[RMDB]
RNA sequence: GGGAACGACUCGAGUAGAGUCGAAAAACACCCUGCACUCUGCGCACGCACGCAACAAACAGAGAAGAGUCCAGUCCGGAGGGCAGAAAGCGCAGGAGGGCCUCCCCGCGCCGGCAGGAGAAGCCGGAAGAGUUGGGUAUUUCGAUACCCAACUCUUAAAAGAAACAACAACAACAAC
Reactivity to DMS in 0.01 (KOAc 150mM, MgCl2 10mM, bicine 150mM(pH8.5), 24C), signal-to-noise 3, nucleotides 027 to 126: a080c170a130c040c010c000u000g010c050a140c050u010c020u030g000c070g000c020a170c120g010c060a100c090g040c070a070a050c090a100a190a130c100a060g000a050g010a060a140g010a090g020u020c100c010a150g030u030c050c030g020g000a090g030g000g000c030a060g000a030a140a120g030c070g010c020a050g010g000a100g040g010g000c050c040u000c020c000c010c000g010c130g000c030c000g000g030c000a100g030g020a160g000a100a080g010c010c000g000g000
Reactivity to 2A3 in 0.01 (KOAc 150mM, MgCl2 10mM, bicine 150mM(pH8.5), 24C), signal-to-noise 2, nucleotides 027 to 126: a010c030a050c000c000c000u040g030c030a040c010u100c010u000g020c050g030c030a030c060g020c020a000c040g130c010a010a070c040a160a180a010c020a010g210a000g070a220a000g060a030g030u080c050c020a060g030u020c010c010g030g010a120g010g030g050c030a030g050a030a080a010g060c100g000c020a000g010g010a010g020g050g000c020c020u010c000c020c020c000g000c000g040c040c000g000g000c010a010g010g050a110g020a080a000g000c000c020g000g000